[RMDB]
RNA sequence: GGGAACGACUCGAGUAGAGUCGAAAAGACUUCGCAGAUCACAGCGCAGAAGCCGCCGACUACAUGCUGACCGUAGCGCUUCGCCAGCACGCCACACGCAAGGUUGAUACUGAGAUUCCCAUGUGCAGCCAUUGUGAAGAGUAUCCGGUCCAUGUGAGGCAAGACCUCAAUUCGUUGAGGUCUUGCCAAAAGAAACAACAACAACAAC
Reactivity to 2A3 in 0.01 (KOAc 150mM, MgCl2 10mM, bicine 150mM(pH8.5), 24C), signal-to-noise 1, nucleotides 027 to 156: g000a000c020u010u010c070g000c070a040g010a140u070c030a040c000a130g060c060g000c130a050g030a080a050g080c090c060g020c000c000g070a030c030u080a040c040a020u080g010c030u090g130a000c020c020g010u090a010g070c040g020c000u000u030c000g010c010c010a040g000c030a020c000g000c000c020a010c000a010c030g080c030a090a010g010g010u050u060g050a010u030a160c020u050g010a000g000a220u010u060c010c000c010a030u140g020u060g040c040a060g010c020c000a110u040u160g000u020g080a100a040g040a000g080u110a020u000c060c000g040g010u010c010c000a030u130g040u040g030a040
Structure probing data (2A3) for a 207-nucleotide construct. The reactions ran in a buffer of 150 mM KOAc, 10 mM MgCl2 and 150 mM bicine (pH 8.5), at 24 C.